[RMDB]
RNA sequence: GGGAACGACUCGAGUAGAGUCGAAAAACUCUUUCUAAUGCCAAUAGCUUUAUCGUUAGCCAGACUGGCUCAUUACUAAUUUGAAACAACAUUUAUUUACCUUAUAUUGUAACCAAAUGUACAGUCGAGUAACGUGGAAUUUCGAUUCCACGUUACUAAAAGAAACAACAACAACAAC
Reactivity to 2A3 in 0.01 (KOAc 150mM, MgCl2 10mM, bicine 150mM(pH8.5), 24C), signal-to-noise 5, nucleotides 027 to 126: a000c030u070c000u030u230u010c040u180a090a050u100g030c010c020a130a050u070a070g010c030u100u160u170a160u160c050g050u090u070a010g040c030c000a060g000a140c040u030g040g050c020u010c020a060u060u110a050c040u100a060a230u090u090u060g080a090a050a010c060a040a010c000a090u040u100u090a090u060u140u040a060c010c000u110u070a070u040a030u270u200g020u020a010a010c010c000a020a060a030u030g020u050a100c040a100g050u040c040g090
Reactivity to DMS in 0.01 (KOAc 150mM, MgCl2 10mM, bicine 150mM(pH8.5), 24C), signal-to-noise 2, nucleotides 027 to 126: a030c020u000c040u000u000u010c010u010a120a070u020g000c030c050a060a240u000a080g000c050u000u040u000a060u020c110g000u000u000a090g000c040c070a030g000a030c080u020g000g000c020u000c140a120u020u000a080c160u030a060a040u030u000u000g000a100a100a040c050a000a040c080a020u000u000u000a060u040u000u010a120c030c180u010u020a120u000a060u010u010g010u000a050a030c140c120a000a030a000u000g020u000a100c210a030g000u000c150g000
Conditions: 150 mM KOAc, 10 mM MgCl2 and 150 mM bicine (pH 8.5), 24 C. Chemical mapping of a 177-nucleotide RNA with 2A3 and DMS. DMS adducts were read by reverse transcription with MarathonRT. 2A3 adducts were read by reverse transcription with SuperScript II with manganese. The DMS profile rests on 2,018 reads.